[RMDB]
RNA sequence: GGGAACGACUCGAGUAGAGUCGAAAAAAGAUAUGGAUCGGAAAGAGAGCUUGGAUUUAGGAGCCGAGGCAGUUCGGAAACGAACUGUACAGCUCCUUGUCAGCUUGAGUUCCGAUCCUAAGUCAAACUACUGAUCUAUGUUCGCAUAGAUCAGUAGAAAAGAAACAACAACAACAAC
Reactivity to DMS in 0.01 (KOAc 150mM, MgCl2 10mM, bicine 150mM(pH8.5), 24C), signal-to-noise 5, nucleotides 027 to 126: a080a070g010a030u000a300u000g010g000a010u000c000g010g000a010a020a070g010a300g000a010g010c010u000u010g010g010a020u000u010u000a000g020g020a010g010c000c000g010a300g000g000c010a000g000u000u000c010g000g000a110a130a200c000g010a010a010c000u000g010u000a000c000a010g000c000u000c000c000u000u000g000u000c000a030g000c010u000u000g010a300g010u000u000c000c010g000a000u000c000c000u000a010a040g010u000c040a130a100a210
Reactivity to 2A3 in 0.01 (KOAc 150mM, MgCl2 10mM, bicine 150mM(pH8.5), 24C), signal-to-noise 3, nucleotides 027 to 126: a000a000g090a030u060a050u140g010g000a010u010c000g020g050a020a040a020g150a030g000a000g020c060u210u280g220g020a110u300u190u190a020g000g000a020g000c010c000g010a100g050g000c010a000g000u000u000c020g000g030a040a090a070c020g000a010a000c000u010g000u000a000c000a000g000c010u000c000c000u010u000g010u000c000a000g010c020u010u030g030a060g060u000u010c000c010g000a000u010c000c000u000a010a000g000u010c010a000a120a070
The record gives the reactivity of an RNA of 177 nucleotides to DMS and 2A3. The reactions ran in a buffer of 150 mM KOAc, 10 mM MgCl2 and 150 mM bicine (pH 8.5), at 24 C. The data come from the RNA Mapping Database (RMDB), library TTRDES.